[RMDB]
RNA sequence: GGGAACGACUCGAGUAGAGUCGAAAAUAAAAGAGCGUACGACUCACAAAGACUGUACGACAGUCUGACUCUCUCGUACGCUUGUUCAACGAGAGAGAGUGUGCGUUGGAACAAGUGUGAAAAAAAACACAAAUAUUCGGUUCGCCGAAUAUUUGUGAAAAGAAACAACAACAACAAC
Reactivity to 2A3 in 0.01 (KOAc 150mM, MgCl2 10mM, bicine 150mM(pH8.5), 24C), signal-to-noise 1, nucleotides 027 to 126: u140a000a110a000a000g060a010g060c040g000u020a030c020g080a060c080u010c030a040c000a010a060a000g000a000c000u010g030u140a120c170g140a070c170a000g000u000c040u020g030a040c000u020c020u000c010u000c020g000u050a050c060g050c040u030u050g010u000u060c020a010a010c000g010a020g000a000g000a010g000a050g000u100g070u040g030c050g020u050u080g040g000a030a030c030a060a070g060u080g050u120g130a040a000a030a020a000a000a080a010
Reactivity to DMS in 0.01 (KOAc 150mM, MgCl2 10mM, bicine 150mM(pH8.5), 24C), signal-to-noise 3, nucleotides 027 to 126: u010a070a090a120a090g000a090g010c010g000u010a030c060g000a090c050u010c020a080c060a110a130a020g010a020c000u000g010u010a130c300g000a160c020a000g000u010c010u010g000a150c070u000c000u000c010u000c000g000u000a060c060g010c050u000u000g000u000u000c070a080a050c050g000a040g000a030g010a030g010a030g010u000g010u000g020c070g010u000u000g000g000a050a020c050a050a060g020u000g010u020g000a000a010a000a010a090a080a150a160

Chemical mapping of a 177-nucleotide RNA with 2A3 and DMS. It was measured as part of the RMDB library M2PK90. For DMS, 2,272 sequencing reads were counted. Conditions: 150 mM KOAc, 10 mM MgCl2 and 150 mM bicine (pH 8.5), 24 C.